[RMDB]
RNA sequence: GGGAACGACUCGAGUAGAGUCGAAAAUCAAGCCGUUUCGACGGCUUGAACAGUUUAGAGUCCUGAGGGACUACGAUCCAGAGUACGGGAGGAACUCUAAGGCCUAGCCCUGCUUCGGCAGGGCUAACUAGGUAUUCUGAUUCGUCAGAAUACCUAGAAAAGAAACAACAACAACAAC
Reactivity to 2A3 in 0.01 (KOAc 150mM, MgCl2 10mM, bicine 150mM(pH8.5), 24C), signal-to-noise 7, nucleotides 027 to 126: u010c000a000a000g000c000c000g000u020u040u080c180g120a020c010g000g010c010u000u000g000a000a010c010a020g000u030u020u040a030g000a000g010u010c000c010u030g050a220g070g130g020a010c020u100a130c180g080a180u040c050c050a050g010a020g140u080a050c050g030g070g060a020g010g020a100a070c000u000c000u020a030a030g070g020c000c010u000a010g000c000c000c010u000g000c010u030u060c200g080g000c000a000g010g010g000c000u000a000a000
Reactivity to DMS in 0.01 (KOAc 150mM, MgCl2 10mM, bicine 150mM(pH8.5), 24C), signal-to-noise 8, nucleotides 027 to 126: u000c000a000a000g010c000c000g020u000u000u010c160g010a040c020g010g000c000u000u000g000a020a080c160a100g000u010u000u000a030g010a030g010u000c000c000u000g010a300g010g010g000a040c020u000a030c070g000a110u010c140c060a170g000a070g000u000a050c050g010g000g010a090g010g000a050a070c010u000c010u000a020a030g010g000c030c020u000a010g000c000c000c000u000g000c000u000u010c200g030g010c000a010g000g010g010c000u000a000a050